[RMDB]
RNA sequence: GGGAACGACUCGAGUAGAGUCGAAAAGAUGCUUUUGAAUGGUUUCGAGAAUAUGCCCUGCGUGCGCAGAAAGGCCGAAUGGGCGAUGAAGUAUAUUGACGAUGAAAAGAUAACUUUGGCCGAACGAUUGGUCGCAUUCGCCAUUGUCGAAGGAGUGAGGGAAUAGAGGUUUCGACCUCUAUUCCCUAAAAGAAACAACAACAACAAC
Reactivity to DMS in 0.01 (KOAc 150mM, MgCl2 10mM, bicine 150mM(pH8.5), 24C), signal-to-noise 1, nucleotides 027 to 156: g000a090u000g010c020u000u000u000u000g000a210a130u010g020g010u000u000u000c060g010a300g080a080a130u010a070u000g000c000c020c030u000g000c090g020u000g000c140g000c050a070g010a020a090a230g030g020c000c030g000a030a050u000g080g000g000c030g010a040u010g040a010a050g070u000a120u000a100u010u000g000a080c090g030a050u020g000a080a050a040a110g020a140u000a060a110c040u000u010u000g020g000c040c030g010a140a050c060g020a210u010u000g010g020u000c030g070c000a160u010u030c000g050c010c000a000u010u000g010u000c050g000a080a050g010g000a130g030u010g000
Reactivity to 2A3 in 0.01 (KOAc 150mM, MgCl2 10mM, bicine 150mM(pH8.5), 24C), signal-to-noise 1, nucleotides 027 to 156: g110a000u110g000c010u110u050u080u080g050a180a130u130g020g030u120u030u030c130g000a090g020a110a050u190a090u200g030c000c000c000u010g050c050g040u070g000c120g020c020a020g060a000a030a040g010g010c000c000g050a110a100u120g000g000g000c030g000a000u000g000a000a000g010u060a060u010a060u120u050g020a000c030g050a000u060g050a030a020a020a020g000a030u050a100a120c090u080u080u120g000g000c050c000g020a060a070c010g050a070u080u130g060g110u070c000g040c090a060u010u020c010g000c000c000a000u020u090g080u060c050g000a030a040g040g040a020g100u100g030
This 207-nucleotide RNA was probed chemically with DMS and 2A3. Values cover nucleotides 27 to 156. 2A3 is a SHAPE reagent: it acylates the 2'-hydroxyl of flexible nucleotides of all four kinds. It was measured as part of the RMDB library OK3TST. Conditions: 150 mM KOAc, 10 mM MgCl2 and 150 mM bicine (pH 8.5), 24 C. For 2A3 the reverse transcriptase was SuperScript II with manganese.